[RMDB]
RNA sequence: GGGAACGACUCGAGUAGAGUCGAAAAUCGAACACUCGUGAGUACGAGUGUGUUCACGAGUUCACGUUCUCACACUCACGUGAUCGAGUGUGAUCGAACGUGUGUGAUCACGUUCUCGAACGAGUGAGAGUUCUCGUUCGAGAUCGAGUGAACGUGAACAACCCGUCAGGUUCGCCUGACGGGUUGUAAAAGAAACAACAACAACAAC
Reactivity to 2A3 in 0.01 (KOAc 150mM, MgCl2 10mM, bicine 150mM(pH8.5), 24C), signal-to-noise 2, nucleotides 027 to 156: u090c030g000a070a020c020a000c000u000c000g020u030g040a060g080u190a030c050g030a080g110u180g000u000g010u130u000c000a000c090g040a030g030u040u040c000a000c000g000u000u010c000u000c000a000c000a000c000u040c000a030c090g270u250g110a120u150c100g000a020g070u040g000u030g020a090u050c080g000a000a010c030g000u000g010u010g000u060g030a050u110c030a000c030g000u000u000c000u000c000g000a000a000c010g000a000g030u050g030a070g010a020g080u130u040c000u000c010g000u010u000c000g000a010g020a010u000c020g060a020g010u010g000a030a010c030g050u030g030a040
Description: This 207-nucleotide RNA was probed chemically with 2A3. Reactivities are rounded to 0.1 and cut off at 0 and 3. The reactions ran in a buffer of 150 mM KOAc, 10 mM MgCl2 and 150 mM bicine (pH 8.5), at 24 C. It was measured as part of the RMDB library OK3TST.